[RMDB]
RNA sequence: GGGAACGACUCGAGUAGAGUCGAAAAUUAGUAGAGACGGGGUUCACCAUGUUAGCCAGGAUAGUCUCGAUCUCUUGACCUUGUGAUCCUCCUGCCUUGGCCUCCCAAAGUGCUGGGAGUACAGACGAACGAUUAAGACGUUCGCGUCUUAAUCGUUAAAAGAAACAACAACAACAAC
Reactivity to 2A3 in 0.01 (KOAc 150mM, MgCl2 10mM, bicine 150mM(pH8.5), 24C), signal-to-noise 1, nucleotides 027 to 126: u000u000a000g070u060a020g020a010g000a060c030g010g040g000g020u040u100c010a020c100c040a030u060g070u100u120a040g040c020c010a050g000g050a100u030a070g010u020c010u000c040g080a190u010c040u010c000u000u110g070a110c000c000u020u040g020u050g050a020u110c010c010u000c000c010u040g000c000c000u010u000g080g000c000c010u000c050c010c000a020a080a020g180u200g140c070u020g010g000g020a050g000u050a020c020a000g110a000c000g030
Reactivity to DMS in 0.01 (KOAc 150mM, MgCl2 10mM, bicine 150mM(pH8.5), 24C), signal-to-noise 3, nucleotides 027 to 126: u020u000a100g000u000a050g000a080g000a040c050g010g010g010g020u000u000c140a090c060c050a100u010g010u000u000a070g020c110c050a050g010g000a080u000a070g010u000c010u010c030g000a110u010c030u000c010u000u010g000a100c030c040u000u000g000u010g000a050u000c020c030u000c030c040u010g010c030c020u000u010g010g010c070c010u000c000c000c000a010a060a100g020u010g020c120u010g000g010g010a040g010u010a050c050a080g000a090c140g000

An RNA of 177 nucleotides, treated with 2A3 and DMS and read out base by base.
The DMS profile rests on 3,099 reads.
The reactions ran in a buffer of 150 mM KOAc, 10 mM MgCl2 and 150 mM bicine (pH 8.5), at 24 C.